[RMDB]
The record gives the reactivity of an RNA of 177 nucleotides to DMS and 2A3. For 2A3, 8,046 sequencing reads were counted. The reactions ran in a buffer of 150 mM KOAc, 10 mM MgCl2 and 150 mM bicine (pH 8.5), at 24 C. DMS adducts were read by reverse transcription with MarathonRT.
RNA sequence: GGGAACGACUCGAGUAGAGUCGAAAAUAUCUGGGCCUGGUAACUCCACCACCGUUGGCGUUAUCAAUCCGCCAACGGGGUAAGAGUUCCCUUUCCUAGACGAAAUCGCCCGUCUUCGGACGGGCGACGAGUAGUACAUGUUCGCAUGUACUACUCGAAAAGAAACAACAACAACAAC
Reactivity to DMS in 0.01 (KOAc 150mM, MgCl2 10mM, bicine 150mM(pH8.5), 24C), signal-to-noise 4, nucleotides 027 to 126: u010a210u000c010u000g000g000g020c260c140u010g030g010u000a010a010c000u000c000c080a080c010c020a120c020c020g020u000u000g020g010c010g010u000u010a300u020c220a080a110u000c210c030g000c000c020a010a020c000g000g000g000g000u000a140a120g000a020g010u000u000c100c000c010u000u000u020c000c000u000a030g010a050c160g000a060a070a120u000c000g020c000c000c000g010u000c000u000u020c200g020g000a000c000g000g000g000c000g000a000
Reactivity to 2A3 in 0.01 (KOAc 150mM, MgCl2 10mM, bicine 150mM(pH8.5), 24C), signal-to-noise 3, nucleotides 027 to 126: u130a020u010c010u010g010g000g010c010c000u000g000g010u010a000a000c000u020c020c020a010c010c030a280c010c030g010u000u000g010g010c010g010u060u050a170u200c040a060a080u050c030c010g020c000c000a000a000c000g010g000g000g000u010a050a000g000a000g000u000u000c010c000c000u000u020u010c010c000u000a010g010a020c050g100a070a040a050u020c000g010c000c000c000g000u000c010u030u050c180g060g000a000c000g000g020g000c010g000a000